[RMDB]
RNA sequence: GGGAACGACUCGAGUAGAGUCGAAAAAGCGCGCAUACUACGGUAUGCGCGCAAUCAGAAAUCGGGAAUGAUGUUCUCCCCUGGGAUUCCAAAACCGCUGUUCCGCUGAUGACGUCUGCUUUUUUAAUCACCACCGUUUGGUUCGCCAAACGGUGAACAAUAGACUCAUGUUCGCAUGAGUCUAUUGAAAAGAAACAACAACAACAAC
Reactivity to 2A3 in 0.01 (KOAc 150mM, MgCl2 10mM, bicine 150mM(pH8.5), 24C), signal-to-noise 1, nucleotides 027 to 156: a010g010c000g000c010g050c000a000u000a000c020u020a020c110g120g000u010a000u000g030c010g060c000g020c000a000a000u010c020a010g090a030a080a040u110c030g040g010g010a030a110u100g060a060u100g060u100u050c020u030c000c000c000c030u030g030g020g060a120u080u190c080c010a000a000a000a150c010c040g000c060u020g040u080u020c030c010g040c060u050g020a060u020g010a010c070g030u030c020u030g040c020u090u100u000u050u050u140a060a080u140c050a020c080c000a010c040c010g000u010u000u000g020g000u010u030c180g000c020c000a000a000a000c000g000g000u000g000a010a000
Reactivity to DMS in 0.01 (KOAc 150mM, MgCl2 10mM, bicine 150mM(pH8.5), 24C), signal-to-noise 1, nucleotides 027 to 156: a090g030c010g040c000g130c000a000u000a020c020u000a070c300g080g000u000a040u010g040c000g000c020g000c000a000a000u000c040a120g010a010a080a080u000c080g020g020g020a110a110u020g030a100u020g000u000u000c050u000c000c020c020c050u020g020g020g050a130u020u010c010c050a040a110a080a110c020c030g000c030u010g040u000u000c020c060g000c000u020g000a080u000g000a050c050g010u000c050u000g030c020u000u040u000u040u000u000a060a100u020c010a140c100c010a020c000c000g020u000u010u000g010g030u010u000c290g000c010c000a000a010a020c000g010g010u000g000a000a030

This 207-nucleotide RNA was probed chemically with 2A3 and DMS. Reactivities are given for positions 27 through 156. For DMS the reverse transcriptase was MarathonRT. 2A3 is a SHAPE reagent: it acylates the 2'-hydroxyl of flexible nucleotides of all four kinds. The DMS profile rests on 2,879 reads. The reactions ran in a buffer of 150 mM KOAc, 10 mM MgCl2 and 150 mM bicine (pH 8.5), at 24 C.